Conditions: 150 mM KOAc, 10 mM MgCl2 and 150 mM bicine (pH 8.5), 24 C. Structure probing data (2A3 and DMS) for a 177-nucleotide construct. Reactivities are rounded to 0.1 and cut off at 0 and 3. 2A3 adducts were read by reverse transcription with SuperScript II with manganese. Source: RMDB library OK2TST, as collected in RNAgym.
[RMDB]
RNA sequence: GGGAACGACUCGAGUAGAGUCGAAAAAUAUGAUAUCAGGUACAAAGUCUAUAACUAACCUAUUGCAGAGAACAUCUGCUAUCAAUGGUGAAGAUAUUGAUAGAGCAGUGUCUAUGAUGUUAGAGAAAAACUUACUUCUAUUCGUAGAAGUAAGUUUAAAAGAAACAACAACAACAAC
Reactivity to 2A3 in 0.01 (KOAc 150mM, MgCl2 10mM, bicine 150mM(pH8.5), 24C), signal-to-noise 6, nucleotides 027 to 126: a000u150a060u100g010a010u010a010u030c020a010g000g030u050a020c030a020a170a020g090u000c020u030a060u020a070a070c020u000a020a020c010c010u030a060u060u120g000c010a000g000a000g020a120a020c030a150u010c000u010g000c010u020a030u040c060a030a100u100g010g030u080g070a100a040g040a070u090a040u110u150g030a010u010a020g080a020g050c070a020g020u000g000u000c020u060a150u100g020a010u010g030u040u050a050g020a020g050a120a140
Reactivity to DMS in 0.01 (KOAc 150mM, MgCl2 10mM, bicine 150mM(pH8.5), 24C), signal-to-noise 9, nucleotides 027 to 126: a080u010a070u010g010a030u000a030u000c030a050g010g020u000a040c040a050a100a300g010u010c020u010a040u010a070a070c040u000a170a050c020c040u000a080u000u000g000c020a020g000a030g010a090a080c200a080u000c010u000g010c000u000a070u010c160a070a060u000g010g010u000g000a110a120g000a120u000a040u000u000g000a020u000a040g010a100g020c050a120g010u000g010u000c020u010a080u010g010a030u000g010u000u000a050g010a170g000a060a070